Conditions: 150 mM KOAc, 10 mM MgCl2 and 150 mM bicine (pH 8.5), 24 C. An RNA of 207 nucleotides, treated with 2A3 and read out base by base. The 2A3 profile rests on 770 reads. It was measured as part of the RMDB library OK3TST. For 2A3 the reverse transcriptase was SuperScript II with manganese.

[RMDB]
RNA sequence: GGGAACGACUCGAGUAGAGUCGAAAAUCAAAACAUCAUUCUAGUUUUACCUUGGAAUGUAUGAUAUAAUUUUAGUUGCAUAUGGAAGGUGCAUGGUAGGACUACAAGGGCAAUUAAAGUGGAGUAGCAAAAAGUCUAUAGGCAGAUAAUCAAGAACGUACAGCCAAAGGUUCGCCUUUGGCUGUACAAAAGAAACAACAACAACAAC
Reactivity to 2A3 in 0.01 (KOAc 150mM, MgCl2 10mM, bicine 150mM(pH8.5), 24C), signal-to-noise 2, nucleotides 027 to 156: u190c060a070a020a020a070c020a010u030c000a000u000u030c000u020a020g050u040u190u090u290a100c000c020u050u100g000g010a020a000u020g080u230a030u090g060a020u030a000u050a290a280u080u050u050u140a090g040u060u070g050c080a050u040a050u230g070g030a040a070g030g000u010g020c000a000u010g030g010u070a100g020g020a020c000u020a010c060a030a060g010g020g040c020a070a000u000u030a040a030a000g020u020g040g000a000g020u000a000g010c020a000a030a030a020a030g000u000c020u010a010u000a000g000g020c010a000g000a050u110a050a030u140c030a020a040g130a090a020c140